[RMDB]
RNA sequence: GGGAACGACUCGAGUAGAGUCGAAAAGCGGCAAGGUCAGAUCCAAACAGCAUCUGAAAAAGCGCCGCACAAAGAAAUAGCCCCGCUAAAGGCGACAUAUAGACCAGCAACGCCGAACCUAAAAGGCGGACGUGUCUUCAUUCGUGAAGACACGUCCAAAAGAAACAACAACAACAAC
Reactivity to 2A3 in 0.01 (KOAc 150mM, MgCl2 10mM, bicine 150mM(pH8.5), 24C), signal-to-noise 1, nucleotides 027 to 126: g030c040g040g000c010a030a000g170g010u000c000a000g000a000u010c050c000a130a130a190c050a090g060c000a000u050c010u010g000a020a000a000a000a050g140c090g000c010c010g040c030a000c040a000a040a000g160a000a260a000u080a040g010c000c020c000c000g120c010u060a040a070a040g000g000c000g000a000c020a000u270a000u050a080g090a040c000c010a010g100c050a070a030c030g000c000c000g040a060a050c010c010u050a040a030a000a000g230g050c060

Background:
Chemical mapping of a 177-nucleotide RNA with 2A3. 2A3 adducts were read by reverse transcription with SuperScript II with manganese. It was measured as part of the RMDB library RFM100.